RNA sequence: GGGAACGACUCGAGUAGAGUCGAAAAGUGUCAGGCUGGAGGAUCGCUUGAGUCCAGGACCUGUGCAACAUAGCGAGACCCCGUCUCUUUGUUCUGGGCUGUAGUGCGCUAUGCAAUAGCCACUGCACUCCAGCGAUCGGGUGUCAUCGCGCCUGUGCCUAGAAUUAAACUUCGGUUUAAUUCUAGGAAAAGAAACAACAACAACAAC
Reactivity to DMS in 0.01 (KOAc 150mM, MgCl2 10mM, bicine 150mM(pH8.5), 24C), signal-to-noise 3, nucleotides 027 to 156: g020u000g020u000c020a030g000g010c020u010g040g020a230g000g010a220u000c060g060c160u000u020g020a220g010u000c040c000a130g010g000a060c020c020u000g020u010g020c010a090a070c070a130u000a070g020c020g000a140g010a060c020c010c030c010g020u000c060u010c070u010u000u010g020u010u010c020u010g010g020g000c130u000g030u000a010g030u000g010c170g020c000u000a020u000g010c210a100a170u000a020g010c000c000a020c000u010g000c000a030c020u000c020c010a060g010c060g010a080u010c000g010g000g010u000g000u000c030a080u000c010g000c000g000c050c000u000g010u000g010
Reactivity to 2A3 in 0.01 (KOAc 150mM, MgCl2 10mM, bicine 150mM(pH8.5), 24C), signal-to-noise 7, nucleotides 027 to 156: g030u040g040u020c010a000g000g030c010u010g030g020a060g080g060a140u090c120g040c200u120u230g050a060g050u000c000c010a020g020g080a140c010c010u030g030u070g040c010a040a060c020a080u130a020g000c000g000a000g010a000c010c020c000c000g050u010c040u030c020u170u210u210g070u260u070c010u000g000g010g000c010u010g000u010a000g010u020g020c170g010c070u010a020u110g190c060a090a240u020a020g000c000c000a000c000u010g000c000a000c010u000c000c000a000g000c000g040a020u070c000g000g020g020u190g010u040c070a210u020c010g000c010g010c000c010u100g040u100g040
The record gives the reactivity of an RNA of 207 nucleotides to DMS and 2A3. For 2A3 the reverse transcriptase was SuperScript II with manganese. Conditions: 150 mM KOAc, 10 mM MgCl2 and 150 mM bicine (pH 8.5), 24 C. Reactivities are given for positions 27 through 156. DMS (dimethyl sulfate) methylates the pairing face of unpaired adenines and cytosines.